[RMDB]
RNA sequence: GGGAACGACUCGAGUAGAGUCGAAAAAUUUGUUCUUUUCCGUUUUACUUUCAGAAACAGAGAUAAACUUCCUACUGAAACAGGCAUUGACAAUUGUUGGAACACUACCGUUUACUUACAUGUUAGAGUAUUCUAUCUCCUUCGGGAGAUAGAAUACAAAAGAAACAACAACAACAAC
Reactivity to DMS in 0.01 (KOAc 150mM, MgCl2 10mM, bicine 150mM(pH8.5), 24C), signal-to-noise 2, nucleotides 027 to 126: a070u000u000u020g000u000u000c090u000u010u000u000c010c050g030u010u000u010u000a090c200u010u010u010c110a050g000a040a040a030c120a040g000a050g010a080u000a040a020a050c060u000u010c020c010u000a070c180u010g010a050a040a060c120a050g010g010c010a020u010u000g000a060c080a040a130u020u000g020u020u000g000g010a090a040c060a030c080u000a060c100c060g010u000u000u000a110c020u000u000a050c110a050u000g000u000u000a080g000a190
The record gives the reactivity of an RNA of 177 nucleotides to DMS.
Conditions: 150 mM KOAc, 10 mM MgCl2 and 150 mM bicine (pH 8.5), 24 C.
The data come from the RNA Mapping Database (RMDB), library OK2TST.